[RMDB]
RNA sequence: GGGAACGACUCGAGUAGAGUCGAAAACUUACCGUUUCGACGGUAAGAAAAAACCGUAGGGUAAGAGCGCACAGGUCGCUACAUUCGAAAGAGUGUAAAAGUCCUGUGAACUACGCUUAUCCCUAAACGGAAAAAGCCUAAGCUUCGGCUUAGGCAAGCCUAAACUAAUCUUCGGAUUAGUUUAGGCAAAAGAAACAACAACAACAAC
Reactivity to DMS in 0.01 (KOAc 150mM, MgCl2 10mM, bicine 150mM(pH8.5), 24C), signal-to-noise 1, nucleotides 027 to 156: c020u010u000a010c000c010g000u000u000u000c300g050a070c000g030g000u010a020a010g010a000a030a090a070a120a090c010c030g010u010a160g020g000g040u000a040a040g000a010g030c010g010c010a010c000a020g000g010u000c040g010c150u010a040c010a010u030u000c000g000a220a180a270g010a020g040u000g030u000a020a140a100a120g010u010c000c000u000g000u000g030a060a040c020u000a010c000g010c010u000u000a020u000c000c010c010u000a010a090a030c020g000g010a030a030a050a100a170g000c000c000u000a000a020g020c010u000u010c300g040g030c010u000u000a020g000g030c000a000a010
Reactivity to 2A3 in 0.01 (KOAc 150mM, MgCl2 10mM, bicine 150mM(pH8.5), 24C), signal-to-noise 4, nucleotides 027 to 156: c000u000u000a000c000c000g040u000u070u200c300g140a030c000g000g000u010a000a010g000a040a110a010a000a020a000c040c010g030u050a050g050g020g000u060a160a150g020a000g050c020g010c000a000c000a000g030g000u000c010g000c070u010a000c010a000u000u000c000g050a100a080a040g010a030g010u020g000u020a070a170a140a090g000u020c000c000u000g000u000g010a030a030c020u090a020c030g010c010u010u070a070u210c000c000c000u070a130a130a010c020g020g070a090a070a020a090a000g010c020c000u020a000a020g000c010u040u180c300g120g000c000u010u000a000g000g000c020a010a000